This 177-nucleotide RNA was probed chemically with DMS and 2A3. For 2A3 the reverse transcriptase was SuperScript II with manganese. High 2A3 reactivity points to a flexible backbone, as in loops and unpaired stretches. For DMS the reverse transcriptase was MarathonRT. It was measured as part of the RMDB libraries RFM100 and RFMREP. The RNA was probed in 150 mM KOAc, 10 mM MgCl2 and 150 mM bicine (pH 8.5) at 24 C. Values are in units of 0.01, from 0 to 300, in steps of 10.
RNA sequence: GGGAACGACUCGAGUAGAGUCGAAAACCGCCACAGUGUCUGGGCAAAGUAGGCUGUUUUUAAUAGUACUAACUUAAUCCACUGAUGGCUAUAUAGAAGCAUUGUGUAAUCCCCGAGCACCUCUGUGAUACCAAUGAUUCUUCGGAAUCAUUGGUAUAAAAGAAACAACAACAACAAC
Reactivity to DMS in 0.01 (KOAc 150mM, MgCl2 10mM, bicine 150mM(pH8.5), 24C), signal-to-noise 6, nucleotides 027 to 126: c010c020g020c050c020a040c020a020g010u010g000u010c140u010g000g000g010c190a080a040a050g010u000a030g000g010c010u000g020u000u010u010u020u050a030a030u000a020g010u000a120c020u000a040a060c010u000u000a090a210u020c060c020a050c010u010g000a090u010g000g000c020u020a080u020a090u020a100g010a090a090g000c070a050u000u000g010u010g010u010a080a120u010c020c010c000c030g000a090g010c060a040c040c040u000c040u000g010u010g020
Reactivity to 2A3 in 0.01 (KOAc 150mM, MgCl2 10mM, bicine 150mM(pH8.5), 24C), signal-to-noise 8, nucleotides 027 to 126: c010c010g010c010c000a020c000a000g040u050g030u070c070u120g010g040g010c080a050a040a010g010u010a020g010g000c010u010g130u010u020u030u100u210a120a060u050a010g040u070a300c010u040a210a030c010u030u060a020a030u040c010c010a010c030u050g090a300u020g170g000c010u010a020u020a010u020a130g140a070a010g020c040a030u060u150g010u000g010u060a040a100u060c000c010c000c010g000a010g010c030a020c010c020u020c030u040g050u060g040